[RMDB]
RNA sequence: GGGAACGACUCGAGUAGAGUCGAAAAGUGAAAGCUCCUUCUCUCGCAAUGUGUCACUCAUGAUUCUCAUGACCCCUGGUUGGAGAGAUCCGGACUAGGAGCCAGGGGGCCUCUGAUUCUGCCAGCCAAAACUGUCGUAAGUUCGCUUACGACAGAACGAAUGAUAAGUCUUCGGACUUAUCAUUCGAAAAGAAACAACAACAACAAC
Reactivity to 2A3 in 0.01 (KOAc 150mM, MgCl2 10mM, bicine 150mM(pH8.5), 24C), signal-to-noise 6, nucleotides 027 to 156: g050u030g030a090a040a020g020c010u040c010c020u050u010c030u010c010u000c020g070c070a050a080u120g060u030g060u090c000a020c020u020c020a050u070g050a130u220u030c070u030c060a040u100g060a110c000c000c000c000u010g020g020u010u080g070g020a050g010a020g010a070u030c050c080g090g050a110c070u130a080g040g010a000g010c000c010a010g000g000g000g010g000c010c010u000c020u040g070a140u120u020c010u070g050c020c010a000g020c020c010a040a090a100a130c020u000g010u000c000g000u000a000a010g010u020u090c150g000c130u000u000a000c000g000a000c000a000g000a000a000
Reactivity to DMS in 0.01 (KOAc 150mM, MgCl2 10mM, bicine 150mM(pH8.5), 24C), signal-to-noise 2, nucleotides 027 to 156: g000u010g000a080a080a100g010c020u010c010c010u000u010c030u000c030u000c020g030c060a100a090u000g010u020g000u000c030a080c020u000c060a090u000g000a130u000u000c040u010c030a130u010g000a050c010c000c010c000u010g020g030u010u000g040g020a100g030a170g010a130u000c050c070g020g020a090c060u000a060g010g010a110g010c000c010a100g010g000g000g030g040c080c030u010c030u000g010a080u010u000c020u010g000c040c030a050g010c040c050a090a030a080a130c010u000g030u000c010g040u000a020a010g030u000u010c300g000c000u000u010a000c000g020a020c000a010g010a020a130